[RMDB]
RNA sequence: GGGAACGACUCGAGUAGAGUCGAAAAGAUAUGGAUCCGUGGCUCCUUGGAUUUAUCGGAAACGAUUGUCAGGAGACCACGGGAUCCUAAGUCAAAACAACGUAUAUAGUUCGCUAUAUACGUUGAAGUGAUGAAGGUACUUCGGUACCUUCAUCACAAAAGAAACAACAACAACAAC
Reactivity to DMS in 0.01 (KOAc 150mM, MgCl2 10mM, bicine 150mM(pH8.5), 24C), signal-to-noise 2, nucleotides 027 to 126: g010a030u000a300u010g020g010a000u000c000c010g010u000g000g030c000u000c010c010u000u010g030g000a030u000u010u000a010u000c000g000g010a110a080a190c000g010a020u000u000g010u000c010a030g010g000a030g000a100c000c000a010c030g020g010g010a000u010c000c000u010a020a090g020u000c050a100a070a080a230c010a010a010c000g010u000a000u010a000u000a010g000u000u000c250g000c000u010a000u000a000u000a000c010g000u000u020g000a070a100
Reactivity to 2A3 in 0.01 (KOAc 150mM, MgCl2 10mM, bicine 150mM(pH8.5), 24C), signal-to-noise 1, nucleotides 027 to 126: g040a020u090a070u180g010g000a030u010c000c000g010u000g000g000c020u000c000c050u090u200g190g000a040u300u300u180a030u060c010g000g070a080a020a010c000g000a020u020u020g020u000c010a000g000g020a020g210a250c000c010a000c000g000g000g020a000u000c000c010u000a080a030g070u040c030a000a040a110a120c010a000a030c010g020u020a010u010a000u020a000g000u040u050c220g000c170u000a020u000a000u010a000c000g000u000u010g010a010a000
The record gives the reactivity of an RNA of 177 nucleotides to DMS and 2A3.
DMS adducts were read by reverse transcription with MarathonRT.
Values cover nucleotides 27 to 126.
The DMS profile rests on 1,722 reads.
The data come from the RNA Mapping Database (RMDB), library TTRDEL.
The reactions ran in a buffer of 150 mM KOAc, 10 mM MgCl2 and 150 mM bicine (pH 8.5), at 24 C.
Reactivities are rounded to 0.1 and cut off at 0 and 3.